Structure probing data (2A3 and DMS) for a 177-nucleotide construct. The RNA was probed in 150 mM KOAc, 10 mM MgCl2 and 150 mM bicine (pH 8.5) at 24 C. The 2A3 profile rests on 1,596 reads. DMS adducts were read by reverse transcription with MarathonRT. It was measured as part of the RMDB library M2PK90.
RNA sequence: GGGAACGACUCGAGUAGAGUCGAAAAGCGCUUAAAUUAAAUUUCCCUUGCUGAGCUCAUCUCAGCAAACAAUAACAAAUUACAAAUAAGAACAGCAGGGAAGGCUGUUCUUAUUUGUUACAAUAAAUAACCUAUUAAGUUUCGACUUAAUAGGUUAAAAAGAAACAACAACAACAAC
Reactivity to 2A3 in 0.01 (KOAc 150mM, MgCl2 10mM, bicine 150mM(pH8.5), 24C), signal-to-noise 2, nucleotides 027 to 126: g100c120g000c150u130u100a060a030a100u160u110a070a120a130u100u250u040c000c010c000u010u010g000c000u000g000a010g000c150u100c090a180u150c070u010c000a000g000c030a000a000a000c010a010a030u180a060a000c020a040a120a000u090u090a000c010a010a000a010u000a000a010g000a000a000c010a000g040c000a040g090g070g070a080a020g160g000c000u010g010u000u000c000u000u000a000u000u000u000g000u000u030a000c010a000a060u040a050a040a020
Reactivity to DMS in 0.01 (KOAc 150mM, MgCl2 10mM, bicine 150mM(pH8.5), 24C), signal-to-noise 1, nucleotides 027 to 126: g020c150g010c100u000u010a040a030a090u010u010a010a120a150u020u000u000c010c010c030u000u020g000c000u000g000a020g000c300u000c290a060u020c000u000c000a000g010c000a000a020a070c100a090a040u000a030a110c080a080a040a080u010u000a020c010a010a010a000u000a010a000g000a000a020c010a000g020c000a010g000g020g020a050a140g000g020c000u000g000u000u000c000u000u000a010u000u000u020g000u000u010a110c080a120a050u000a030a060a110